[RMDB]
RNA sequence: GGGAACGACUCGAGUAGAGUCGAAAAUUUCCAAGGCAGCCUCAAAAAGAGCCUGGUGCCCAGGGGGUCCUUCGUUUCUGUGUGGCUGCAGAGGCCAGGAGUGCAGUGACUGUCUCACUGCCUAGUGGUUGUGGCUCACAUCCUGCCCUGAUGGAGAACGACUAAUGCUAUUCGUAGCAUUAGUCGUAAAAGAAACAACAACAACAAC
Reactivity to 2A3 in 0.01 (KOAc 150mM, MgCl2 10mM, bicine 150mM(pH8.5), 24C), signal-to-noise 2, nucleotides 027 to 156: u020u010u000c010c000a010a040g100g000c000a010g010c010c010u030c030a110a130a050a110a050g020a030g020c000c000u020g030g040u130g000c000c010c010a040g140g020g020g000g040u020c010c040u060u050c100g040u040u120u090c010u020g030u000g030u060g060g020c000u020g000c060a010g100a060g050g000c040c040a060g000g030a020g000u140g000c010a010g000u000g050a080c100u100g120u150c010u020c090a000c010u020g030c000c000u050a040g000u040g060g000u030u030g010u030g060g070c030u030c060a070c010a010u040c020c020u040g040c030c000c030u060g020a030u060g000g060a020g040a010
Reactivity to DMS in 0.01 (KOAc 150mM, MgCl2 10mM, bicine 150mM(pH8.5), 24C), signal-to-noise 1, nucleotides 027 to 156: u000u040u000c020c000a070a090g030g020c020a040g000c000c020u020c040a040a120a090a170a090g020a070g020c010c010u000g020g010u000g010c010c000c020a240g010g000g000g000g020u010c100c010u010u010c000g010u000u010u000c000u020g010u000g030u010g000g000c010u010g000c030a030g010a080g010g040c070c040a040g010g030a100g020u010g000c000a000g000u010g020a040c010u000g010u020c180u000c000a010c000u010g000c000c030u000a040g030u020g020g000u000u000g000u000g010g040c020u000c070a050c050a100u000c000c030u010g100c060c030c070u000g010a140u000g030g010a160g000a150